[RMDB]
RNA sequence: GGGAACGACUCGAGUAGAGUCGAAAAGUUAGCAUGAACGUUUGGUAACACAACAGUUUGUUGGCCAGACUGCACUGGAGCAAAUAAUGAACACAAGACUUUCAAGGGGAGAAAGGGCUUCACUGGGAGCAUCCCUAAUAUUCGUAUUAGGGAUGCUAAAAGAAACAACAACAACAAC
Reactivity to 2A3 in 0.01 (KOAc 150mM, MgCl2 10mM, bicine 150mM(pH8.5), 24C), signal-to-noise 3, nucleotides 027 to 126: g040u040u060a030g050c070a070u090g100a100a040c100g000u020u040u010g030g020u060a110a030c010a010c000a060a220c010a080g050u070u140u090g010u040u110g080g000c000c000a010g000a030c040u050g030c040a020c050u050g040g040a040g020c020a000a040a060u220a060a070u110g100a090a000c030a010c020a090a050g060a030c030u030u060u120c110a080a020g060g000g010g000a040g020a010a030a010g030g020g000c000u060u040c040a050c080u060g060g040g020
Reactivity to DMS in 0.01 (KOAc 150mM, MgCl2 10mM, bicine 150mM(pH8.5), 24C), signal-to-noise 5, nucleotides 027 to 126: g010u000u000a070g010c040a060u010g000a100a130c120g010u000u000u000g010g010u000a090a070c120a090c070a050a070c080a090g000u010u010u000g010u010u000g010g010c030c020a030g020a070c040u000g010c090a070c080u000g010g000a080g000c040a060a060a080u010a070a100u000g010a070a050c140a070c100a070a090g010a100c050u000u000u000c050a070a110g010g010g010g000a120g000a040a070a040g010g000g010c050u000u000c050a060c070u010g000g000g000